[RMDB]
RNA sequence: GGGAACGACUCGAGUAGAGUCGAAAAACAACGCAUUCACGGCACCGACGGGUGGUUUGAUCGUCCAGGGGAAUGUGGGUAUCGGGACGACCAAUCCAGGCGUAAAUGCUCUGCAGGUCAGCGGCAAUGUGGUCACCCAGGGGUUCACCUCGAACGCCGAAUCGUACUCGUUCGCGAGUACGAUUCGAAAAGAAACAACAACAACAAC
Reactivity to 2A3 in 0.01 (KOAc 150mM, MgCl2 10mM, bicine 150mM(pH8.5), 24C), signal-to-noise 1, nucleotides 027 to 156: a000c070a000a030c060g020c050a040u050u040c060a000c080g040g000c010a040c030c000g120a070c020g050g100g050u090g000g020u000u000u120g020a000u000c000g030u040c020c030a010g010g000g000g110a090a070u140g030u160g040g070g040u100a080u140c100g020g000g000a020c060g040a060c000c030a010a010u070c010c000a030g080g000c000g030u050a060a160a000u120g040c070u110c070u260g050c060a030g050g080u170c020a070g020c010g090g000c030a050a050u100g000u020g040g000u000c010a000c000c000c010a000g040g000g000g000u080u140c050a120c080c060u050c020g070a070a050c060g050c030